Overview:
An RNA of 207 nucleotides, treated with 2A3 and DMS and read out base by base. Source: RMDB library OK3TST, as collected in RNAgym. For 2A3, 3,103 sequencing reads were counted. For DMS the reverse transcriptase was MarathonRT. The DMS profile rests on 2,435 reads. Values cover nucleotides 27 to 156.

RNA sequence: GGGAACGACUCGAGUAGAGUCGAAAAUAGGCAGGAAGUGACAGAGAAGUAUCCAGAUUCUGCCUUCUGGAGGCUCAACUUCAGGAUCCAAGCACUUAACCGUGUCACACAUUGCUGCUCACAUCAAGGGAGGGUCCAAAAUGUCUCUAUGGAAAGAGCGAUGGAAAAUAUUCGUAUUUUCCAUCGCAAAAGAAACAACAACAACAAC
Reactivity to 2A3 in 0.01 (KOAc 150mM, MgCl2 10mM, bicine 150mM(pH8.5), 24C), signal-to-noise 4, nucleotides 027 to 156: u080a010g020g000c000a000g070g020a060a080g090u030g090a050c040a040g130a010g020a140a020g060u090a070u060c020c020a010g000a070u120u020c020u100g040c000c000u010u000c010u000g030g000a020g020g000c030u030c120a080a070c000u090u070c040a020g030g010a000u020c030c020a040a010g040c020a020c060u100u110a060a050c030c040g040u020g020u090c000a030c000a010c030a120u030u220g000c030u020g010c010u030c020a060c010a110u110c050a060a020g010g010g010a050g000g000g010u000c010c000a000a090a010a020u090g000u000c020u000c010u040a100u120g040g060a130a030a030g050a050
Reactivity to DMS in 0.01 (KOAc 150mM, MgCl2 10mM, bicine 150mM(pH8.5), 24C), signal-to-noise 2, nucleotides 027 to 156: u000a030g010g080c060a090g010g020a090a070g010u010g020a050c030a080g010a100g000a060a140g030u000a080u000c000c000a050g000a130u000u000c020u000g020c070c060u000u010c020u000g010g010a090g000g010c040u000c100a110a060c010u020u020c030a080g070g000a020u000c030c010a090a140g040c010a100c020u000u010a070a190c070c110g000u000g020u010c010a020c050a050c080a200u010u000g010c010u000g000c030u000c050a080c060a150u020c080a090a080g020g020g000a130g010g010g000u000c020c010a040a000a060a100u000g000u000c010u000c020u000a170u000g010g000a100a130a080g000a220